This 177-nucleotide RNA was probed chemically with DMS.
The data come from the RNA Mapping Database (RMDB), library TTRINS.
Values are in units of 0.01, from 0 to 300, in steps of 10.
For DMS the reverse transcriptase was MarathonRT.
The reactions ran in a buffer of 150 mM KOAc, 10 mM MgCl2 and 150 mM bicine (pH 8.5), at 24 C.
RNA sequence: GGGAACGACUCGAGUAGAGUCGAAAAGAUAUGGAACGCGACCCUAUAGCGAGGUUACGAGGUAUUUCGGAAACGAAAUACUCCCCACCGUAACUACCCACCGCUUUAGGGUCGCGUUCCUAAGUCACUUCAUAUAGGUCUUCGGACCUAUAUGAAGAAAAGAAACAACAACAACAAC
Reactivity to DMS in 0.01 (KOAc 150mM, MgCl2 10mM, bicine 150mM(pH8.5), 24C), signal-to-noise 3, nucleotides 027 to 126: g040a070u000a300u040g020g010a060a010c000g010c010g000a000c000c000c000u000a000u000a020g020c000g010a140g010g000u000u000a010c010g000a150g050g000u000a000u000u000u010c000g000g000a120a130a270c000g000a000a010a000u000a020c010u000c080c030c020c030a300c060c000g000u000a010a000c020u000a040c100c050c150a300c120c000g000c020u000u010u000a000g020g010g010u000c000g000c010g000u000u000c000c000u000a030a030g010u000c050a240

About this RNA:
For DMS, 1,542 sequencing reads were counted.